[RMDB]
Chemical mapping of a 177-nucleotide RNA with DMS and 2A3. DMS (dimethyl sulfate) methylates the pairing face of unpaired adenines and cytosines. The reactions ran in a buffer of 150 mM KOAc, 10 mM MgCl2 and 150 mM bicine (pH 8.5), at 24 C. For 2A3 the reverse transcriptase was SuperScript II with manganese.

RNA sequence: GGGAACGACUCGAGUAGAGUCGAAAAAGACGGGUUAGGAUCCUCUACAGUACUGUACGGUGCUCUUAGUCACUGCCAUGUGGGACCUGGCCCCACAUAUCAUCCACACUACAGCACCAUACGGUACCUACCAUAAAACGUUCGCGUUUUAUGGUAGAAAAGAAACAACAACAACAAC
Reactivity to DMS in 0.01 (KOAc 150mM, MgCl2 10mM, bicine 150mM(pH8.5), 24C), signal-to-noise 5, nucleotides 027 to 126: a080g010a080c110g020g000g010u000u010a080g010g010a090u000c010c000u000c100u020a110c200a190g010u000a010c010u000g010u010a000c050g000g010u010g000c000u000c140u010u000a030g010u000c050a050c060u000g000c160c130a020u000g000u000g010g000g000a060c030c100u010g020g000c050c000c000c000a000c000a010u000a090u010c150a090u000c130c020a060c140a010c010u000a030c300a020g000c000a010c000c010a040u000a010c010g020g000u010a010c030
Reactivity to 2A3 in 0.01 (KOAc 150mM, MgCl2 10mM, bicine 150mM(pH8.5), 24C), signal-to-noise 4, nucleotides 027 to 126: a000g080a040c100g020g020g020u040u070a060g050g090a100u030c020c000u030c040u070a080c090a040g010u000a000c000u020g000u010a000c010g000g000u000g000c000u030c040u060u070a000g000u020c040a010c060u010g010c040c030a030u010g000u000g010g030g010a060c050c100u070g130g010c030c000c020c000a000c000a000u060a010u060c070a060u070c090c010a030c000a000c040u020a010c010a030g000c000a000c020c000a010u000a010c000g000g000u000a010c000